RNA sequence: GGGAACGACUCGAGUAGAGUCGAAAAGUCGUGUCCUUCGGGACACGACAAACAUGGUAAACGCCGACACCAUGAAAGAUCGAAAUACGAUCAAGGCGUAAAAAAGUCUAACCUUCGGGUUAGACAACAUAAGAACUCCGUUCGCGGAGUUCUUAUGAAAAGAAACAACAACAACAAC
Reactivity to DMS in 0.01 (KOAc 150mM, MgCl2 10mM, bicine 150mM(pH8.5), 24C), signal-to-noise 2, nucleotides 027 to 126: g000u010c010g030u010g010u010c000c000u010u010c180g050g010g000a010c000a010c000g020a000c030a000a080a200c030a010u010g000g020u000a050a140a050c020g060c000c020g000a270c190a010c010c000a000u010g000a080a040a070g010a030u000c010g000a120a140a160u020a180c020g010a030u010c060a070a130g000g010c000g030u010a010a010a060a100a100a070g010u000c000u000a000a000c000c000u000u010c130g010g020g050u000u000a000g000a000c000a030a120
Reactivity to 2A3 in 0.01 (KOAc 150mM, MgCl2 10mM, bicine 150mM(pH8.5), 24C), signal-to-noise 1, nucleotides 027 to 126: g020u000c000g000u000g000u000c010c030u010u050c230g080g000g000a000c010a000c000g000a000c000a010a000a000c000a010u000g000g000u070a130a160a000c000g000c000c000g120a080c030a010c120c000a010u020g030a210a120a010g020a000u020c030g040a080a130a190u300a160c010g000a010u010c010a000a020g000g000c000g000u050a030a010a040a000a000a030g000u000c000u000a000a010c000c010u010u060c240g140g000g000u010u010a010g000a000c000a000a000
Conditions: 150 mM KOAc, 10 mM MgCl2 and 150 mM bicine (pH 8.5), 24 C. The record gives the reactivity of an RNA of 177 nucleotides to DMS and 2A3. For DMS, 1,138 sequencing reads were counted. For 2A3 the reverse transcriptase was SuperScript II with manganese. Reactivities are given for positions 27 through 126. For DMS the reverse transcriptase was MarathonRT.